Notes:
An RNA of 177 nucleotides, treated with 2A3 and DMS and read out base by base.
RNA sequence: GGGAACGACUCGAGUAGAGUCGAAAAGAUAUGGAAUUCGUCUUGGACGUUGAAACGUUAUCGGAAACGAUAACGUGGAGUCCUUGACGAGAUUCCUAAGUCAAACGUCGUCCUUCGGGACGACGAAGUAAACCUAAUCCUUCGGGAUUAGGUUUACAAAAGAAACAACAACAACAAC
Reactivity to 2A3 in 0.01 (KOAc 150mM, MgCl2 10mM, bicine 150mM(pH8.5), 24C), signal-to-noise 2, nucleotides 027 to 126: g010a020u050a040u100g000g030a020a030u160u090c030g000u000c010u010u000g010g020a010c060g280u300u050g000a020a010a000c010g010u000u000a000u000c010g020g000a030a050a070c000g010a020u000a000a020c000g010u030g000g010a000g010u000c000c000u000u000g010a010c010g000a000g010a010u000u030c010c000u010a120a010g090u010c060a120a060a090c010g010u000c010g020u020c010c000u010u100c300g100g000g000a000c000g000a000c010g000a000a000
Reactivity to DMS in 0.01 (KOAc 150mM, MgCl2 10mM, bicine 150mM(pH8.5), 24C), signal-to-noise 4, nucleotides 027 to 126: g010a030u000a300u020g000g000a030a090u000u000c010g000u000c000u010u000g010g010a020c000g010u000u010g010a190a120a010c010g010u000u000a000u000c000g000g000a080a070a140c000g010a010u000a010a010c000g000u020g000g000a060g010u000c000c000u000u000g010a000c000g010a040g010a060u000u000c000c000u000a050a120g010u010c030a100a110a270c020g010u000c010g010u000c000c000u000u020c260g010g010g010a000c010g010a010c000g000a010a070
The DMS profile rests on 6,117 reads.